[RMDB]
RNA sequence: GGGAACGACUCGAGUAGAGUCGAAAACAGCUGUACUGGAUCGCUUCGCAACUUGACCGGAGGGGUCCGCAGCUUUACUGGAUCGCUUUGCAACUUCACAGGAGUGGUCCGCAAGCCACCGGAAGUGCACAUGACGGUGGUUCGCCACCGUCAUGUGAAAAGAAACAACAACAACAAC
Reactivity to 2A3 in 0.01 (KOAc 150mM, MgCl2 10mM, bicine 150mM(pH8.5), 24C), signal-to-noise 7, nucleotides 027 to 126: c060a000g000c010u010g030u100a090c090u180g000g000a020u020c030g030c300u010u020c010g020c040a160a190c180u180u300g050a140c060c010g010g010a000g010g070g000g000u000c000c000g000c000a000g000c000u010u020u020a090c050u050g060g010a040u040c020g010c030u030u020u110g040c050a120a080c030u090u070c050a070c040a160g030g040a090g040u020g010g020u040c010c040g000c060a030a050g010c000c020a030c040c050g020g020a050a020g050u040g030
Reactivity to DMS in 0.01 (KOAc 150mM, MgCl2 10mM, bicine 150mM(pH8.5), 24C), signal-to-noise 4, nucleotides 027 to 126: c270a030g010c010u010g020u020a080c160u040g030g000a050u000c000g020c010u010u000c000g020c160a160a120c300u030u050g000a100c300c020g000g000a000g010g000g010g000u000c010c000g050c020a010g010c020u000u010u050a040c090u000g030g010a010u010c050g000c010u000u000u010g000c040a110a060c030u000u000c010a080c120a230g020g000a130g030u000g000g000u000c030c100g000c130a100a120g000c000c050a070c080c070g030g010a050a060g020u010g000
Structure probing data (2A3 and DMS) for a 177-nucleotide construct. The 2A3 profile rests on 5,664 reads. Source: RMDB library OK1LIB, as collected in RNAgym. The reactions ran in a buffer of 150 mM KOAc, 10 mM MgCl2 and 150 mM bicine (pH 8.5), at 24 C. The DMS profile rests on 4,847 reads.